[RMDB]
This 177-nucleotide RNA was probed chemically with 2A3 and DMS. The RNA was probed in 150 mM KOAc, 10 mM MgCl2 and 150 mM bicine (pH 8.5) at 24 C. For DMS, 2,187 sequencing reads were counted.

RNA sequence: GGGAACGACUCGAGUAGAGUCGAAAAACGAUCCUGGUGUUGAGCCUCGUCUAUGCAGGCGCAUUGGUCUUUGCGCCGUGGUUGCUCAUCGUCCUGAGUCAUCACCUUGGUAUCAAGAUUUGUGGUCCGAUUGCUAGACGUUCGCGUCUAGCAAUCGAAAAGAAACAACAACAACAAC
Reactivity to 2A3 in 0.01 (KOAc 150mM, MgCl2 10mM, bicine 150mM(pH8.5), 24C), signal-to-noise 1, nucleotides 027 to 126: a030c040g010a040u010c000c020u100g000g030u060g050u050u040g030a000g030c000c020u020c110g050u000c040u070a130u220g050c110a030g070g000c000g000c000a000u000u140g190g090u120c220u060u030u010g040c020g000c000c010g000u000g030g050u090u090g000c010u000c050a100u070c110g060u030c000c080u060g000a000g050u030c010a010u060c020a050c040c000u000u040g060g000u190a220u200c020a000a020g050a080u050u090u080g080u080g020g030u040c040
Reactivity to DMS in 0.01 (KOAc 150mM, MgCl2 10mM, bicine 150mM(pH8.5), 24C), signal-to-noise 2, nucleotides 027 to 126: a090c170g000a010u000c020c010u000g000g030u000g000u010u000g000a100g000c030c020u000c030g020u000c080u010a080u000g000c130a120g010g000c010g050c030a030u000u020g010g010u020c110u000u010u010g000c030g000c010c010g000u000g010g020u000u010g010c020u000c010a060u000c100g000u000c060c060u010g000a060g000u010c140a050u000c030a040c030c000u000u000g010g010u020a080u000c040a050a050g000a160u000u000u000g030u010g010g000u000c050
Reactivities are rounded to 0.1 and cut off at 0 and 3.
2A3 is a SHAPE reagent: it acylates the 2'-hydroxyl of flexible nucleotides of all four kinds.